[RMDB]
RNA sequence: GGGAACGACUCGAGUAGAGUCGAAAAUAUGUUAAACUGUCUUCUAAAGUUUACCAUGAUAACGACGAAAUCGCAGAAGAAUAUUUCAAUAAUAUGAAAUAAGUGUGUACAAACACCAAGGACGGUGUUAUUAUAGAUUUAUCAAAACAACCACAGAUCCUUUUACAUGAUUCGUCAUGUAAAAGGAAAAAGAAACAACAACAACAAC
Reactivity to DMS in 0.01 (KOAc 150mM, MgCl2 10mM, bicine 150mM(pH8.5), 24C), signal-to-noise 2, nucleotides 027 to 156: u000a070u000g020u000u020a010a050a080c050u000g010u000c100u020u000c110u010a110a040a080g020u000u000u000a040c050c050a080u010g010a110u000a060a110c060g030a050c030g010a100a090a300u000c030g040c040a140g000a140a140g000a150a160u000a030u000u000u020c010a050a110u000a100a210u000a210u000g000a060a030a040u000a030a170g020u010g010u000g000u000a160c100a120a090a070c010a020c000c020a060a100g040g010a090c060g010g010u000g010u000u000a030u010u000a050u010a080g000a100u000u000u010a090u010c030a040a060a060a070c050a040a140c000c030a050c070a100g000a140
Reactivity to 2A3 in 0.01 (KOAc 150mM, MgCl2 10mM, bicine 150mM(pH8.5), 24C), signal-to-noise 4, nucleotides 027 to 156: u120a000u010g000u010u020a010a010a030c020u020g080u090c050u180u060c090u270a170a110a050g000u010u010u000a030c040c000a010u040g040a070u090a110a030c040g040a000c030g050a020a040a030u080c040g000c060a030g020a150a010g020a090a120u050a010u050u000u010c000a000a010u090a190a020u140a080u120g010a020a020a020u040a060a040g070u040g020u020g010u100a050c070a060a090a020c000a000c010c020a070a040g190g020a050c090g000g000u000g020u020u020a050u060u060a050u050a040g020a030u030u100u100a030u130c020a010a080a010a090c040a050a030c020c120a020c010a090g110a100
The record gives the reactivity of an RNA of 207 nucleotides to DMS and 2A3.
Source: RMDB library OK3TST, as collected in RNAgym.
As a SHAPE reagent, 2A3 marks flexible, mostly unpaired nucleotides at the ribose 2'-OH.
The reactions ran in a buffer of 150 mM KOAc, 10 mM MgCl2 and 150 mM bicine (pH 8.5), at 24 C.